[RMDB]
Background: Structure probing data (2A3 and DMS) for a 177-nucleotide construct. Source: RMDB library OK2TST, as collected in RNAgym. For DMS, 8,056 sequencing reads were counted. For 2A3 the reverse transcriptase was SuperScript II with manganese. The reactions ran in a buffer of 150 mM KOAc, 10 mM MgCl2 and 150 mM bicine (pH 8.5), at 24 C.
RNA sequence: GGGAACGACUCGAGUAGAGUCGAAAACUUUGUGUUACGGGUUAGUUGCACUGGACCAAGCAGAAGGUCAUCUGCCCGCUAGAAAAGGUAAUGAUCGACAACCAGCGCGAUAAACAACAGGGCCAGGCAAAUCAGUAGGUUUCGACCUACUGAUUUGAAAAGAAACAACAACAACAAC
Reactivity to 2A3 in 0.01 (KOAc 150mM, MgCl2 10mM, bicine 150mM(pH8.5), 24C), signal-to-noise 3, nucleotides 027 to 126: c020u100u070u180g110u040g030u090u100a070c050g050g020g010u050u130a060g010u020u060g020c030a030c050u030g010g040a110c040c040a110a020g050c040a030g030a160a020g050g010u000c000a020u010c030u040g000c000c000c020g000c060u130a090g120a110a120a010a010g000g030u030a020a040u050g050a030u030c040g030a030c040a040a060c010c010a000g010c020g000c010g030a020u110a070a180a030c030a020a010c030a070g000g040g000c020c000a020g080g000
Reactivity to DMS in 0.01 (KOAc 150mM, MgCl2 10mM, bicine 150mM(pH8.5), 24C), signal-to-noise 7, nucleotides 027 to 126: c040u000u010u010g020u010g010u000u000a070c080g000g000g010u020u000a130g030u000u000g000c040a040c030u000g010g010a160c160c130a080a120g010c140a100g010a110a220g010g010u000c020a020u000c080u010g010c010c010c040g000c180u010a070g000a080a060a120a080g000g000u010a030a040u010g000a030u010c030g000a130c070a080a100c030c040a020g010c050g010c030g000a050u010a070a050a060c070a040a070c050a080g010g010g010c030c040a060g000g010